[RMDB]
RNA sequence: GGGAACGACUCGAGUAGAGUCGAAAACACGGCAGUUGGUGAAGCAUAAGUUCCUACGUUGGAAUGAGAUCAGCCGCCGUUACGUUGAUGAUGAACCUGAGUUCUACACACCUGAUGUAUGGCGUGGACGUAGUGCUGACAAGAAGCAGGGUAGUGAUACUAAAUCAGCUUUCGAGCUGAUUUAGUAAAAAGAAACAACAACAACAAC
Reactivity to 2A3 in 0.01 (KOAc 150mM, MgCl2 10mM, bicine 150mM(pH8.5), 24C), signal-to-noise 3, nucleotides 027 to 156: c050a000c000g020g000c000a000g010u030u050g020g030u060g070a130a020g090c050a060u060a190a110g030u010u010c000c000u100a150c230g140u180u140g000g020a030a030u030g020a030g010a070u020c040a000g000c000c000g000c000c010g000u020u050a040c090g020u030u040g060a140u030g000a020u060g020a030a020c010c030u090g030a040g080u080u000c020u060a020c110a000c020a010c060c000u070g050a090u070g100u070a090u150g080g000c110g020u040g000g000a030c030g020u050a010g060u010g080c050u020g040a030c040a110a040g120a030a040g060c010a050g000g040g000u030a030g040u060g110a080
Reactivity to DMS in 0.01 (KOAc 150mM, MgCl2 10mM, bicine 150mM(pH8.5), 24C), signal-to-noise 2, nucleotides 027 to 156: c080a090c010g000g080c020a020g000u000u000g030g050u010g020a100a130g000c090a130u050a090a300g050u000u000c010c020u000a060c260g060u010u000g020g020a070a060u000g000a240g010a060u000c050a080g000c010c030g000c000c030g020u010u000a070c090g010u000u010g000a100u000g000a140u000g010a040a040c080c040u000g010a160g010u000u000c030u000a110c060a070c050a080c000c000u000g000a180u010g020u000a060u000g010g010c010g050u000g040g050a100c090g020u000a060g010u010g020c060u010g000a220c100a050a090g000a130a090g020c060a110g030g010g000u020a080g000u000g010a270
The data come from the RNA Mapping Database (RMDB), library OK3TST. Chemical mapping of a 207-nucleotide RNA with 2A3 and DMS. For 2A3, 1,503 sequencing reads were counted. For DMS, 4,002 sequencing reads were counted. DMS adducts were read by reverse transcription with MarathonRT. The RNA was probed in 150 mM KOAc, 10 mM MgCl2 and 150 mM bicine (pH 8.5) at 24 C.